[RMDB]
Conditions: 150 mM KOAc, 10 mM MgCl2 and 150 mM bicine (pH 8.5), 24 C. Chemical mapping of a 177-nucleotide RNA with 2A3. Values cover nucleotides 27 to 126. The data come from the RNA Mapping Database (RMDB), library RFM100.
RNA sequence: GGGAACGACUCGAGUAGAGUCGAAAAAAGGGCGAAGGCCGGGGGCUAGAAGGCGAUCAGACACCACCGUAUUCCCGGCCGUAAACGGUGCCGCCCCGCGGCCGGCGCGCGCGUCCCGCCGGCCGCCACCAAUAUAUAGUUUCGACUAUAUAUUGGUAAAAGAAACAACAACAACAAC
Reactivity to 2A3 in 0.01 (KOAc 150mM, MgCl2 10mM, bicine 150mM(pH8.5), 24C), signal-to-noise 1, nucleotides 027 to 126: a000a000g030g000g000c050g050a130a000g000g020c010c010g010g010g000g020g020c070u140a110g070a260a060g100g010c000g030a100u130c090a030g080a130c020a020c040c040a040c040c010g010u090a130u060u080c000c000c010g000g030c000c000g000u010a000a000a000c030g100g010u070g010c010c010g020c000c030c000c010g010c000g020g000c000c000g090g000c000g000c030g000c000g040c070g050u020c030c010c000g000c000c000g000g000c000c000g000c010c000